[RMDB]
Conditions: 150 mM KOAc, 10 mM MgCl2 and 150 mM bicine (pH 8.5), 24 C. The record gives the reactivity of an RNA of 207 nucleotides to 2A3 and DMS.
RNA sequence: GGGAACGACUCGAGUAGAGUCGAAAAGCUAAGAUGAGCACCAAGAAUUGACCAACUGGGUUUGUCAAGAUGGAAGUUUUUGGAGACCUUGAGAAGUAGUUUUAUUAGAGUGGUGGGGAUGAAAGCCUGAUUAGCAUAGCUGAAGGACAGAAUUGGAUAAAUGAUAUGGGUUCGCCCAUAUCAUUUAAAAAGAAACAACAACAACAAC
Reactivity to 2A3 in 0.01 (KOAc 150mM, MgCl2 10mM, bicine 150mM(pH8.5), 24C), signal-to-noise 3, nucleotides 027 to 156: g010c030u060a010a050g030a130u040g040a020g000c040a010c040c010a050a010g030a050a090u060u040g030a030c010c050a050a040c060u070g220g020g000u050u070u080g060u040c070a020a020g030a070u120g020g010a030a060g030u030u010u060u150u140g050g000a040g010a020c010c000u030u030g040a070g010a070a020g010u090a000g000u000u040u090u080a100u120u060a050g040a000g030u020g010g030u020g000g000g000g000a010u070g040a010a020a040g010c000c000u040g030a080u110u080a030g000c010a050u070a030g000c010u050g030a020a000g010g000a000c010a020g090a060a060u130u090g050g050a040
Reactivity to DMS in 0.01 (KOAc 150mM, MgCl2 10mM, bicine 150mM(pH8.5), 24C), signal-to-noise 3, nucleotides 027 to 156: g020c020u010a090a090g000a110u010g000a130g020c030a230c040c030a060a090g020a080a090u000u000g010a180c020c030a070a130c050u000g010g050g020u000u000u010g030u000c050a050a150g010a120u000g020g000a150a080g020u000u000u000u000u000g010g010a110g000a190c040c030u000u000g000a100g010a060a100g040u000a060g010u010u000u010u000a120u020u010a110g010a100g020u000g000g030u000g000g000g020g010a130u000g000a060a060a110g000c020c010u000g010a120u000u000a050g010c050a080u020a060g000c040u000g010a060a090g010g020a090c050a090g010a080a130u000u020g020g000a210

Overview
The 2A3 profile rests on 1,541 reads. High DMS reactivity at an A or C suggests that its Watson-Crick edge is free. DMS adducts were read by reverse transcription with MarathonRT.